This 207-nucleotide RNA was probed chemically with 2A3. For 2A3 the reverse transcriptase was SuperScript II with manganese. Values cover nucleotides 27 to 156. The reactions ran in a buffer of 150 mM KOAc, 10 mM MgCl2 and 150 mM bicine (pH 8.5), at 24 C.
RNA sequence: GGGAACGACUCGAGUAGAGUCGAAAACGGCAAAAAAGCAAACUUGACCACCUAGGAUAAAAGAGAUCUUAUCCAAGGAUGCAAAAGAUAAUCUCACUUUUGACACCCACUGAUCUCGAACUUAAAGAAAACCGAGACUACUUCGGUAGUCUCGGAACUACGGACAUUGGUUCGCCAAUGUCCGUAGAAAAGAAACAACAACAACAAC
Reactivity to 2A3 in 0.01 (KOAc 150mM, MgCl2 10mM, bicine 150mM(pH8.5), 24C), signal-to-noise 2, nucleotides 027 to 156: c020g040g000c040a020a030a020a000a080a080g070c070a130a090a130c110u100u070g070a210c000c010a000c020c010u010a050g040g000a020u010a060a060a060a030g020a000g000a000u010c010u010u020a010u010c010c010a040a020g020g000a040u090g030c000a010a040a010a010g070a030u170a210a190u100c070u050c120a030c000u010u010u010u050g030a030c010a070c020c010c010a060c150u110g010a020u010c010u000c000g000a090a070c050u140u160a140a070a060g070a030a090a040a010c000c000g000a000g000a000c000u010a000c020u060u080c160g020g000u000a000g000u000c010u000c010g000g010a000a000